RNA sequence: GGGAACGACUCGAGUAGAGUCGAAAAAGCAGGACAGAGCUGCUGAGAUGGUCGUCGAUGCUGCGCACGAGAAGGCUGCACAGCAUGCUGCACGCAAUGAUGGCAGCCCUGAAGAAAUAGCAGAGCACAUCGUCUUUAGGUUCGCCUAAAGACGAUGAAAAGAAACAACAACAACAAC
Reactivity to DMS in 0.01 (KOAc 150mM, MgCl2 10mM, bicine 150mM(pH8.5), 24C), signal-to-noise 6, nucleotides 027 to 126: a070g030c040a050g020g010a280c060a050g010a060g020c010u000g020c010u000g000a150g020a090u000g010g020u010c020g020u000c030g000a080u000g000c010u000g000c050g000c030a080c030g000a180g020a110a150g020g010c160u000g010c010a040c000a010g000c010a020u000g000c060u000g020c190a030c050g000c060a120a040u010g000a140u020g000g010c010a020g010c000c000c000u000g010a090a090g010a050a080a070u000a090g000c030a090g010a120g020c150a210
Reactivity to 2A3 in 0.01 (KOAc 150mM, MgCl2 10mM, bicine 150mM(pH8.5), 24C), signal-to-noise 5, nucleotides 027 to 126: a010g040c010a000g030g050a040c010a030g050a020g070c010u020g010c020u050g010a100g020a080u090g040g060u230c010g010u000c010g010a020u020g010c000u010g000c020g040c020a010c020g090a090g110a230a030g150g010c120u000g010c030a020c010a060g010c000a010u190g300c070u160g020c060a010c020g000c010a010a090u140g070a050u110g030g000c010a000g010c000c010c010u060g040a070a060g060a050a110a020u150a030g010c080a010g010a020g090c040a000
An RNA of 177 nucleotides, treated with DMS and 2A3 and read out base by base. The reactions ran in a buffer of 150 mM KOAc, 10 mM MgCl2 and 150 mM bicine (pH 8.5), at 24 C. It was measured as part of the RMDB library OK2TRN.